[RMDB]
RNA sequence: GGGAACGACUCGAGUAGAGUCGAAAACGAUGCGCCGCGACUGGUCGACCUUGUCCGUCGGGCGCAGGCAUCGGUGAACCGUCUCGCCACCGAACGCGAAGCGCUGACCACCAGAAUCGACUCGGUGCGGAGUCGUAGUAUUCGUACUACGACUCCGAAAAGAAACAACAACAACAAC
Reactivity to 2A3 in 0.01 (KOAc 150mM, MgCl2 10mM, bicine 150mM(pH8.5), 24C), signal-to-noise 5, nucleotides 027 to 126: c030g070a070u070g010c010g000c000c020g280c010g060a030c070u200g030g000u050c030g070a260c030c090u140u250g040u060c020c010g010u000c010g000g010g000c000g000c000a000g010g000c010a040u040c010g020g000u060g040a050a060c030c000g090u020c070u040c070g060c040c000a050c010c010g020a050a060c060g000c020g090a080a020g030c020g000c060u030g030a060c010c020a010c010c010a040g030a030a070u060c020g030a030c030u010c050g020g040u060g040
Reactivity to DMS in 0.01 (KOAc 150mM, MgCl2 10mM, bicine 150mM(pH8.5), 24C), signal-to-noise 3, nucleotides 027 to 126: c090g000a080u000g020c010g030c020c030g050c000g000a050c000u060g020g000u030c040g000a130c210c110u040u030g010u000c040c080g020u000c000g020g000g000c000g010c000a000g020g030c030a080u010c000g000g030u010g030a080a130c120c060g000u020c020u030c030g000c050c010a040c020c040g010a070a080c090g010c020g000a080a080g000c080g010c020u010g010a080c120c040a080c070c010a140g000a120a100u010c070g000a080c070u020c000g010g080u000g000